An RNA of 207 nucleotides, treated with 2A3 and read out base by base. It was measured as part of the RMDB library OK3TST. Conditions: 150 mM KOAc, 10 mM MgCl2 and 150 mM bicine (pH 8.5), 24 C. For 2A3, 634 sequencing reads were counted.
RNA sequence: GGGAACGACUCGAGUAGAGUCGAAAAUCGGUGUUCUCAGGAGGAGCGCCGUUGUGACACGCGGAGUAGGUGACGGAGAAUUCAGGUAAAAUUUCCGCGCUGAAAUCAUCCGUUUCAAUGAAUGAGGUUGAUUUGAUUGAUACUUUUCCACUGGCUAGAUACGUUCGUCUUUCGAGACGAACGUAUCAAAAGAAACAACAACAACAAC
Reactivity to 2A3 in 0.01 (KOAc 150mM, MgCl2 10mM, bicine 150mM(pH8.5), 24C), signal-to-noise 2, nucleotides 027 to 156: u090c020g000g030u030g000u080u000c080u030c030a160g170g100a050g000g030a020g010c050g000c060c040g000u030u080g020u030g080a020c020a050c180g000c020g000g030a050g010u050a040g100g000u020g010a110c000g000g000a040g070a040a110u110u100c060a100g010g250u300a060a100a030a050u110u080u030c050c060g000c010g000c040u040g030a050a040a020u100c030a070u000c000c010g020u040u080u070c070a070a060u120g080a050a100u060g020a060g010g180u070u010g060a150u000u000u150g080a130u000u020g000a020u050a260c040u040u070u050u000c080c000a000c130u100g000g000c050u090a110